Chemical mapping of a 177-nucleotide RNA with 2A3. Reactivities are given for positions 27 through 126. Source: RMDB library TTRDEL, as collected in RNAgym. The 2A3 profile rests on 1,294 reads.
RNA sequence: GGGAACGACUCGAGUAGAGUCGAAAAGAUAUGGAGGUGGACAUGAUCACUCUCGGAAACGAGAGAAUGAUCAACAGCCAUUCUCCUAAGUCAAACCUGGUGACUGAGUUCGCUCAGUCACCAGGAAGCUGAACCGAAUGUUCGCAUUCGGUUCAGCAAAAGAAACAACAACAACAAC
Reactivity to 2A3 in 0.01 (KOAc 150mM, MgCl2 10mM, bicine 150mM(pH8.5), 24C), signal-to-noise 1, nucleotides 027 to 126: g000a000u040a000u170g000g000a050g020g010u020g000g020a080c060a300u130g010a020u020c000a010c030u020c010u000c000g010g060a050a050a030c040g000a000g010a000g000a050a260u090g000a010u040c000a030a030c130a020g030c020c000a000u300u090c010u000c040c000u010a120a000g100u040c000a030a050a170c010c000u000g000g000u000g020a000c000u000g010a020g020u110u150c230g160c100u000c020a010g000u000c000a010c000c000a000g040g010a000a030